[RMDB]
RNA sequence: GGGAACGACUCGAGUAGAGUCGAAAAGAUAUUCAUGUAUUACGUGUUGUAAUUAGUGAUUACAAGGAUAACAUUUUUUAUACGCGUAUGUUUUUAGAGCAAAAACAAGGGGAUUUCCUCUAUGUCACGUUACUCUCUGUUUCGACAGAGAGUAACGAAAAGAAACAACAACAACAAC
Reactivity to 2A3 in 0.01 (KOAc 150mM, MgCl2 10mM, bicine 150mM(pH8.5), 24C), signal-to-noise 2, nucleotides 027 to 126: g050a050u090a050u070u180c030a070u080g060u080a100u100u040a000c010g030u010g090u240u100g020u010a010a010u010u010a020g030u000g090a220u060u020a030c100a260a180g120g080a140u030a070a000c020a000u100u000u000u000u040u000a020u010a030c030g000c000g000u020a020u010g020u000u020u060u000u060a190g010a040g060c060a000a010a130a060a000c010a030a050g010g060g020g000a030u040u060u150c050c000u030c070u100a200u090g090u030c040a030
Reactivity to DMS in 0.01 (KOAc 150mM, MgCl2 10mM, bicine 150mM(pH8.5), 24C), signal-to-noise 2, nucleotides 027 to 126: g000a080u010a050u000u010c030a040u010g010u000a080u010u000a000c010g030u000g010u010u000g030u000a020a000u010u000a040g050u010g000a120u010u010a070c100a230a160g020g010a230u000a010a050c020a000u000u000u000u000u000u000a010u000a030c030g010c000g000u000a010u000g010u000u020u000u000u000a090g030a110g020c200a010a000a010a040a030c030a060a110g000g020g000g010a230u000u000u000c040c000u010c180u020a080u000g010u010c120a170
Structure probing data (2A3 and DMS) for a 177-nucleotide construct. The data come from the RNA Mapping Database (RMDB), library OK2TST. In probing experiments dimethyl sulfate is read out at A N1 and C N3, which are open when not base-paired. The RNA was probed in 150 mM KOAc, 10 mM MgCl2 and 150 mM bicine (pH 8.5) at 24 C.